[RMDB]
RNA sequence: GGGAACGACUCGAGUAGAGUCGAAAAACCUCGCUGUUUUCUUGGCUAACUUUCAGCGAGGUGAGGCAAGGCGGCAAAAAAAAGUUGGGAGCAGCAACGGCAAGCAAACAAAAAGUUCCAGCCGAGGCACUUAGUGCAAGCUUCGGCUUGCACUAAAAACGAGAUUAAUGUUCGCAUUAAUCUCGUUAAAAGAAACAACAACAACAAC
Reactivity to DMS in 0.01 (KOAc 150mM, MgCl2 10mM, bicine 150mM(pH8.5), 24C), signal-to-noise 1, nucleotides 027 to 156: a040c010c000u000c000g020c000u000g000u010u000u010u000c000u000u020g000g000c080u000a060a080c040u000u000u000c000a070g020c020g000a040g020g050u000g010a040g000g030c020a080a000g010g010c040g000g000c070a000a020a000a050a070a030a030a080g000u010u000g000g000g010a090g060c090a060g020c030a040a090c070g000g000c020a060a100g010c150a080a030a140c050a050a020a060a090a070g000u000u000c060c040a110g020c040c000g020a090g050g000c060a030c100u000u000a000g010u020g020c000a000a020g040c000u000u000c300g050g000c010u030u000g000c000a030c010u000a020a020a050
Reactivity to 2A3 in 0.01 (KOAc 150mM, MgCl2 10mM, bicine 150mM(pH8.5), 24C), signal-to-noise 1, nucleotides 027 to 156: a000c000c000u000c000g010c000u000g040u050u050u010u010c070u150u250g080g000c030u030a060a010c000u020u060u040c000a000g000c000g010a010g000g010u020g010a090g060g000c040a060a000g040g000c050g000g030c070a070a000a000a000a030a000a000a090g060u070u040g010g020g000a020g020c010a000g020c010a030a000c030g040g010c020a020a030g060c010a070a130a060c020a010a120a040a030a010g000u050u070c100c030a000g000c000c020g030a050g030g100c040a020c130u030u040a000g010u000g000c010a000a000g030c020u030u050c120g040g000c000u000u020g000c000a000c000u030a000a000a000